[RMDB]
RNA sequence: GGGAACGACUCGAGUAGAGUCGAAAAAUUAUUGAGCUACGGUUAAUGUUGCCACCUGAGGCAUUAACAAGAGACUAGUAGGUUAGCUGCGUUGUGUUAGCCUUGCUGGCUGGCGCGACAUCGCGGCGAAUUUUAAAUAAGUCAGCUAUAGGUGUAGGUGCAAAUAUGGGUUCGCCCAUAUUUGCACAAAAGAAACAACAACAACAAC
Reactivity to 2A3 in 0.01 (KOAc 150mM, MgCl2 10mM, bicine 150mM(pH8.5), 24C), signal-to-noise 1, nucleotides 027 to 156: a000u200u150a070u050u200g010a030g040c000u020a010c010g020g000u020u000a020a000u000g020u050u050g000c040c020a000c000c020u020g020a030g000g000c020a000u000u000a000a000c000a000a060g050a000g070a180c110u110a090g130u020a020g020g000u080u050a020g000c000u000g000c000g000u000u000g020u020g000u100u070a000g000c000c020u030u180g020c010u000g000g040c000u000g010g000c000g060c040g010a040c010a020u100c020g000c010g000g000c040g000a010a020u030u200u100u210a030a040a010u040a010a010g010u020c010a000g000c020u060a090u030a100g000g010u040g030u060a030g020